[RMDB]
RNA sequence: GGGAACGACUCGAGUAGAGUCGAAAAAGUGAGUAUGGCUCGUUACGACGAGCCAUACUCACAACGGUUUUCCUAAAUCGUCGUGAGACGGACCUUGGAAAACCUAGUAUUUAAAUAACUAGGUCAAGGCUCGUUUUUAAUUCGUUAAAAACGAGCCAAAAGAAACAACAACAACAAC
Reactivity to 2A3 in 0.01 (KOAc 150mM, MgCl2 10mM, bicine 150mM(pH8.5), 24C), signal-to-noise 3, nucleotides 027 to 126: a000g010u010g000a010g000u010a010u010g010g020c010u030c010g010u030u070a110c300g010a000c000g000a120g000c000c000a000u000a000c000u000c000a000c000a000a000c000g010g010u010u020u000u010c000c000u000a000a000a020u100c000g010u000c020g040u050g080a100g010a060c010g000g000a000c000c010u010u000g000g010a010a010a010a010c000c020u000a000g020u000a020u040u090u120a080a190a100u170a070a050c060u040a000g010g000u000c020a010a060